[RMDB]
RNA sequence: GGGAACGACUCGAGUAGAGUCGAAAAGUAGGUGGGGUAGCAGCGCCCCCCGCGGAUGCUGGCGCGCACGUAGUCGUACAGCUCGUGCGAGGGCGCGAGGAGCCCCGUGCCGAGGUUGGAGCGUUGCGGCUUUUCGGCGCGGUAGACGAUCUGGCGGGUCCAUUUUACAAUUCGUUGUAAAAUGGACAAAAGAAACAACAACAACAAC
Reactivity to 2A3 in 0.01 (KOAc 150mM, MgCl2 10mM, bicine 150mM(pH8.5), 24C), signal-to-noise 2, nucleotides 027 to 156: g080u100a050g020g050u070g030g010g020g000u040a050g070c070a010g020c000g020c030c000c000c000c010c000g010c030g000g020a200u160g000c000u020g020g050c010g000c020g080c040a110c180g100u110a070g030u140c010g000u020a190c030a030g000c000u000c010g000u030g040c060g010a210g010g010g000c060g000c000g020a050g080g020a030g010c010c040c000c010g010u010g000c040c000g000a040g040g010u120u100g030g010a030g020c050g060u130u120g050c080g070g010c030u070u020u060u030c060g010g000c050g010c020g010g070u040a040g050a100c040g020a050u000c050u090g010g040c040g050g080
Reactivity to DMS in 0.01 (KOAc 150mM, MgCl2 10mM, bicine 150mM(pH8.5), 24C), signal-to-noise 1, nucleotides 027 to 156: g000u000a040g010g040u000g020g010g090g030u000a060g060c090a240g010c040g040c000c000c000c010c020c020g040c060g000g030a080u000g020c030u000g000g000c050g020c020g040c060a130c200g010u000a120g010u000c040g050u000a050c070a070g010c080u000c010g000u010g040c030g000a070g010g010g040c040g000c040g000a090g010g010a240g010c060c030c000c030g040u010g040c000c030g000a060g020g010u010u010g030g000a090g020c080g000u000u000g000c060g010g020c030u000u000u000u000c000g010g020c000g070c030g040g000u000a130g020a060c030g000a060u010c070u000g030g030c060g010g000